[RMDB]
RNA sequence: GGGAACGACUCGAGUAGAGUCGAAAAGAUAUGGAGUAUUGAGCUAGUCCAGUGUAAACUGUCUAAUACUCGGAAACGAGUAUUAGACAGUUUACACGGACUUGGACCUCACUGUACUCCUAAGUCAGGGAAUAUCAUAGUUCGCUAUGAUAUUCCCAAAAGAAACAACAACAACAAC
Reactivity to DMS in 0.01 (KOAc 150mM, MgCl2 10mM, bicine 150mM(pH8.5), 24C), signal-to-noise 2, nucleotides 027 to 126: g000a020u010a300u010g000g000a010g020u000a020u000u000g000a000g010c050u000a040g000u010c000c000a060g060u000g040u000a000a000a020c000u000g000u000c000u000a010a010u010a010c000u000c000g010g020a130a190a220c000g000a010g020u000a000u000u010a000g000a010c000a000g000u000u020u000a010c000a010c000g010g020a000c020u010u000g050g010a100c300c020u000c000a060c300u020g000u000a000c000u000c000c000u000a040a130g010u000c080a250
The record gives the reactivity of an RNA of 177 nucleotides to DMS.
Conditions: 150 mM KOAc, 10 mM MgCl2 and 150 mM bicine (pH 8.5), 24 C.
DMS adducts were read by reverse transcription with MarathonRT.